[RMDB]
RNA sequence: GGGAACGACUCGAGUAGAGUCGAAAAGAUAUGGAAUACAUCUCGUAAUAAAUUCCAGGGAGAUUGCCCUCGGAAACGAGGGUCCAAUCGACGAUCUGGAUUUAUUACGAGAUGUAUUCCUAAGUCACAUUCGUACAGUGUUCGCACUGUACGAAUGAAAAGAAACAACAACAACAAC
Reactivity to DMS in 0.01 (KOAc 150mM, MgCl2 10mM, bicine 150mM(pH8.5), 24C), signal-to-noise 1, nucleotides 027 to 126: g040a040u000a300u000g000g040a020a000u000a000c000a000u000c000u000c000g010u010a010a010u000a010a010a020u020u010c000c000a010g000g010g010a030g010a010u000u000g000c020c000c010u000c010g000g010a120a070a130c020g020a020g000g000g010u010c240c040a000a010u000c000g000a080c300g000a050u000c020u000g000g010a020u000u000u000a010u000u000a000c010g000a000g010a000u000g010u000a000u000u000c000c000u000a010a070g010u000c030a280